[RMDB]
RNA sequence: GGGAACGACUCGAGUAGAGUCGAAAAACGGUGCGCUACGGCGCACCGAAGUCGAAUGGUUUGUUUUAGCCUGAGCUAUGUGUUAUUGCACAUACAUAGCUUCUUGUUAAAACAUACCAAUCGGUAAUCCAACAGAGAUAUUCGUAUCUCUGUUGGAAAAAGAAACAACAACAACAAC
Reactivity to DMS in 0.01 (KOAc 150mM, MgCl2 10mM, bicine 150mM(pH8.5), 24C), signal-to-noise 3, nucleotides 027 to 126: a140c030g020g030u000g030c000g040c010u010a100c190g040g020c010g030c010a000c000c020g020a010a040g010u010c010g010a020a110u000g000g010u000u000u000g000u000u000u000u000a010g000c000c050u000g000a030g010c000u000a010u010g000u000g010u000u000a080u000u030g020c300a090c160a010u000a000c000a000u000a010g000c000u000u010c010u010u000g010u010u000a000a000a020a010c000a000u000a010c000c000a010a020u000c010g020g010u000a080a140
Reactivity to 2A3 in 0.01 (KOAc 150mM, MgCl2 10mM, bicine 150mM(pH8.5), 24C), signal-to-noise 7, nucleotides 027 to 126: a000c020g010g000u030g010c010g020c000u040a080c300g120g010c000g000c010a000c000c000g000a020a020g060u030c000g000a010a020u030g000g010u010u030u010g000u010u010u000u000a010g000c010c010u000g000a000g000c010u000a000u000g030u000g030u040u080a160u250u300g060c100a080c010a060u040a010c000a010u000a020g000c000u180u080c000u010u010g000u000u000a000a000a000a000c000a000u000a000c000c000a000a020u000c000g000g020u080a060a120